[RMDB]
RNA sequence: GGGAACGACUCGAGUAGAGUCGAAAAGCAAACGGGCGCUGGCUUUAGGAAAGGAUGUUCCGUGGCCGUAAAUGCAGGUUCACAGCGCUUCGUAUCGCGGCAAUAUCGCCAGUGGUGCUGUCGUGAUUACCACCACUUCGUUCGCGAAGUGGUGGUAAAAAGAAACAACAACAACAAC
Reactivity to 2A3 in 0.01 (KOAc 150mM, MgCl2 10mM, bicine 150mM(pH8.5), 24C), signal-to-noise 2, nucleotides 027 to 126: g030c060a040a020a020c000g010g040g000c000g050c000u030g030g000c000u060u110u150a070g010g000a070a000a000g140g080a120u150g180u040u000c020c010g110u080g120g050c000c010g000u050a010a020a000u290g010c090a040g040g030u200u220c070a010c020a060g000c000g000c050u190u020c010g040u050a000u000c030g010c000g000g000c000a010a060u020a020u130c000g080c110c030a090g010u130g110g010u080g060c000u000g010u000c000g010u000g000a030u020
Reactivity to DMS in 0.01 (KOAc 150mM, MgCl2 10mM, bicine 150mM(pH8.5), 24C), signal-to-noise 1, nucleotides 027 to 126: g010c070a040a140a020c030g000g000g010c030g020c030u000g000g000c080u000u000u000a070g000g030a070a060a090g000g000a100u040g060u000u000c000c020g010u000g020g010c000c000g000u000a070a040a080u000g000c000a110g040g000u040u000c210a180c020a060g010c040g010c000u010u010c000g060u000a020u020c050g000c010g010g000c060a010a090u000a020u000c000g000c110c150a120g000u000g030g000u000g050c030u000g030u000c020g000u000g010a060u000
The record gives the reactivity of an RNA of 177 nucleotides to 2A3 and DMS. The reactions ran in a buffer of 150 mM KOAc, 10 mM MgCl2 and 150 mM bicine (pH 8.5), at 24 C. Values cover nucleotides 27 to 126. The data come from the RNA Mapping Database (RMDB), libraries RFM100 and RFMREP.